[RMDB]
Source information
The record gives the reactivity of an RNA of 177 nucleotides to DMS and 2A3. Conditions: 150 mM KOAc, 10 mM MgCl2 and 150 mM bicine (pH 8.5), 24 C. For 2A3 the reverse transcriptase was SuperScript II with manganese.

RNA sequence: GGGAACGACUCGAGUAGAGUCGAAAAGAGGUACUGUCAUCGGGAAAAUUGAAGGUAUCUACAACGCCAGAAGCAUCUGAUGUUUUUAUCAUUGCCGUUCCGACGCCGAAUAAUGAUGAUCAGUACCAUGUGGACCUAUAUUCGUAUAGGUCCACAUAAAAGAAACAACAACAACAAC
Reactivity to DMS in 0.01 (KOAc 150mM, MgCl2 10mM, bicine 150mM(pH8.5), 24C), signal-to-noise 7, nucleotides 027 to 126: g010a160g020g010u000a000c010u000g000u000c000a010u000c000g000g030g020a070a070a090a120u020u010g000a300a100g000g020u000a060u010c040u000a130c280a040a070c040g010c220c090a070g010a080a090g020c040a030u010c140u010g000a040u000g030u020u020u030u030u030a050u020c050a070u030u010g010c140c020g000u000u010c180c170g000a040c070g000c010c020g010a070a080u010a060a060u030g010a020u000g000a020u030c020a010g020u000a000c000c000
Reactivity to 2A3 in 0.01 (KOAc 150mM, MgCl2 10mM, bicine 150mM(pH8.5), 24C), signal-to-noise 9, nucleotides 027 to 126: g130a050g010g000u000a000c010u000g010u010c000a000u000c010g060g060g130a070a130a070a070u150u150g070a100a020g020g020u040a050u020c020u050a040c030a090a010c030g040c040c030a080g040a120a030g030c020a050u050c110u200g030a060u060g210u070u110u050u080u170a090u090c060a040u010u130g030c030c010g020u030u000c030c020g020a030c060g020c010c010g010a050a030u150a100a070u200g010a000u010g000a020u180c020a000g000u000a000c000c000